[RMDB]
Annotation:
Structure probing data (2A3) for a 207-nucleotide construct. It was measured as part of the RMDB library ARCHII. The RNA was probed in 150 mM KOAc, 10 mM MgCl2 and 150 mM bicine (pH 8.5) at 24 C. Reactivities are given for positions 27 through 156.

RNA sequence: GGGAACGACUCGAGUAGAGUCGAAAAUCUCCAUCUCGCACCGUGCCCUGUUGUGGCAACCGUCUUUUCUCCGUCGCUAAUUUGUCCUGGGCAGAAAUGUCUGCUCGGAGGCGGGGGAGUCCGGUCUGAAGUGUCCCGGCUAUAAUAAAUCGAUCUUAGUUCUAUACUGGUUCGCCAGUAUAGAACUAAAAGAAACAACAACAACAAC
Reactivity to 2A3 in 0.01 (KOAc 150mM, MgCl2 10mM, bicine 150mM(pH8.5), 24C), signal-to-noise 1, nucleotides 027 to 156: u040c040u000c010c010a130u050c030u080c120g040c000a030c100c020g110u080g020c000c020c060u060g000u190u080g070u150g070g000c000a010a020c000c060g020u030c020u070u140u160u060c000u030c010c030g300u020c000g030c080u090a150a300u200u070u300g140u000c020c010u050g010g000g000c000a010g040a010a240a060u270g140u050c000u000g000c000u000c000g000g000a010g010g000c010g000g000g000g000g000a000g020u110c030c020g000g030u050c040u040g080a010a010g040u020g010u100c010c010c020g070g060c030u100a080u030a300a010u100a170a120a070u080c010g000a010u020c080u000u000